This 177-nucleotide RNA was probed chemically with 2A3 and DMS. DMS adducts were read by reverse transcription with MarathonRT. 2A3 is a SHAPE reagent: it acylates the 2'-hydroxyl of flexible nucleotides of all four kinds. For 2A3 the reverse transcriptase was SuperScript II with manganese. Reactivities are given for positions 27 through 126. For DMS, 34,802 sequencing reads were counted.
RNA sequence: GGGAACGACUCGAGUAGAGUCGAAAAGCUGGGCCCGUACCGCGAGAUAGGAGGGGGCCUCUCGUUCCGGAUCGUGGACCGGAAGACGGUGACCGUCUCAUUGGGAGCGGGGUGGCAGUACCUCCACCAAUUGGAUGUUAUUCGUAACAUCCAAUUGAAAAGAAACAACAACAACAAC
Reactivity to 2A3 in 0.01 (KOAc 150mM, MgCl2 10mM, bicine 150mM(pH8.5), 24C), signal-to-noise 9, nucleotides 027 to 126: g050c050u070g020g050g030c030c020c020g020u100a060c020c030g040c050g080a070g030a150u230a180g010g020a010g010g020g000g010g000c010c000u010c000u010c010g020u020u000c010c000g040g030a090u130c060g050u180g030g060a040c030c030g040g040a060a100g110a050c020g000g040u060g090a160c020c010g050u010c030u020c090a110u110u230g150g000g000a030g010c020g000g000g010g070u140g020g000c010a020g070u100a240c000c000u000c000c000a010c010
Reactivity to DMS in 0.01 (KOAc 150mM, MgCl2 10mM, bicine 150mM(pH8.5), 24C), signal-to-noise 9, nucleotides 027 to 126: g020c060u010g010g010g000c020c030c040g020u010a090c050c050g010c070g010a100g010a150u010a110g010g010a050g000g010g010g010g010c010c010u000c010u000c010g020u000u000c000c000g010g000a050u010c150g020u010g010g000a100c030c030g010g010a100a100g000a110c040g000g010u010g010a140c050c030g000u000c040u000c090a130u000u000g010g010g000a060g010c010g010g000g000g010u000g010g010c030a070g010u000a130c020c010u000c010c010a110c160